[RMDB]
Structure probing data (2A3) for a 177-nucleotide construct. The RNA was probed in 150 mM KOAc, 10 mM MgCl2 and 150 mM bicine (pH 8.5) at 24 C. It was measured as part of the RMDB library RFM100.
RNA sequence: GGGAACGACUCGAGUAGAGUCGAAAAUAGUAUUUUUAUUGCUAUUAGAUGUUAAAACAUAAAUAGUACUUUAUGUGUGACUAAAUAUUUUCAAUUUUUUCACAAAAUUUUCAAAUAAGACGGACAGGUGUACCUAUCUGUUCGCAGAUAGGUACACAAAAGAAACAACAACAACAAC
Reactivity to 2A3 in 0.01 (KOAc 150mM, MgCl2 10mM, bicine 150mM(pH8.5), 24C), signal-to-noise 1, nucleotides 027 to 126: u100a000g030u020a150u000u080u050u060u030a230u070u170g020c010u010a010u000u030a100g070a090u020g000u140u200a080a050a100a000c000a010u000a000a000a010u110a140g000u130a160c020u090u060u090a040u090g020u000g010u010g010a000c010u020a020a020a010u080a120u050u130u040u080c030a030a060u000u000u000u000u000u070c020a020c000a090a170a070a150u060u140u140u060c020a020a020a020u070a000a060g000a000c060g080g000a000c020a040g100